[RMDB]
RNA sequence: GGGAACGACUCGAGUAGAGUCGAAAAUAAGCUUAAAUGCAAAUUGCUAAAGGCAACAGUUAUUUCUGUCAAAUUAAACUCAUUCAGAAAUAAUAAAUUACAAUCUGAAGUGAACAAAAGGCUCAAUCAGUCAUCAAUGGUAAACAUUUUGAGCACACGAGUGAGCAUUAUUCGUAAUGCUCACUCGAAAAGAAACAACAACAACAAC
Reactivity to 2A3 in 0.01 (KOAc 150mM, MgCl2 10mM, bicine 150mM(pH8.5), 24C), signal-to-noise 2, nucleotides 027 to 156: u090a020a030g000c020u080u090a080a080a020u180g020c090a040a050a250u190u100g010c020u050a100a140a090g060g000c000a020a000c020a130g010u070u020a020u000u070u010c000u040g050u040c010a060a170a230u130u200a130a050a090c060u110c020a070u120u090c000a010g030a010a000a000u060a000a000u040a020a050a000u240u140a060c020a020a020u140c070u060g020a090a000g000u000g080a080a020c060a090a140a020a020g020g000c000u000c000a020a010u030c000a010g170u080c010a040u010c030a140a090u130g000g100u100a090a050a090c030a000u060u050u020u030g000a000g080c050a010c020a000
Chemical mapping of a 207-nucleotide RNA with 2A3. Values are in units of 0.01, from 0 to 300, in steps of 10. The data come from the RNA Mapping Database (RMDB), library OK3TST.